[RMDB]
RNA sequence: GGGAACGACUCGAGUAGAGUCGAAAACAUUGUUCUGAUCAUCUGCAGAUCAGCUAUUAGAAGAGAAAGAUCAGUUAAGUCCUUUGGACCUGAUCAGCUUGAUACAAGAACUACUGAUUUCAACUUCAAAACGGGUGCUACUUCGGUAGCACCCGAAGAAAAUACCAUGGUUCGCCAUGGUAUUUUCAAAAGAAACAACAACAACAAC
Reactivity to DMS in 0.01 (KOAc 150mM, MgCl2 10mM, bicine 150mM(pH8.5), 24C), signal-to-noise 2, nucleotides 027 to 156: c040a160u020u010g030u020u010c030u000g000a030u010c000a190u000c100u000g030c210a290g000a010u000c010a010g020c140u000a060u000u000a200g010a070a030g010a120g010a150a160a070g000a000u000c000a040g000u000u000a040a110g030u000c000c010u010u020u000g040g000a030c060c030u010g010a180u020c100a080g010c110u030u020g010a090u000a110c000a010a030g020a040a060c000u000a070c000u010g010a010u000u010u010c040a100a270c040u000u010c020a040a100a090a180c050g000g020g090u000g020c010u000a000c000u000u000c260g030g010u000a020g020c010a000c000c000c000g010a000a010
Reactivity to 2A3 in 0.01 (KOAc 150mM, MgCl2 10mM, bicine 150mM(pH8.5), 24C), signal-to-noise 4, nucleotides 027 to 156: c040a040u100u210g060u090u060c000u000g020a020u010c020a030u040c080u230g020c080a050g010a010u020c010a000g020c010u120a140u270u120a080g060a120a000g030a010g050a050a110a000g020a030u030c010a000g020u070u130a180a010g010u030c020c000u060u180u300g020g010a070c030c010u040g030a050u040c030a000g040c010u040u100g020a030u040a170c070a080a010g010a100a030c030u080a020c010u090g030a080u030u080u080c070a090a090c030u110u060c010a050a020a070a020c020g010g010g000u010g000c000u000a000c010u020u050c150g090g010u000a000g020c010a000c000c000c000g000a010a000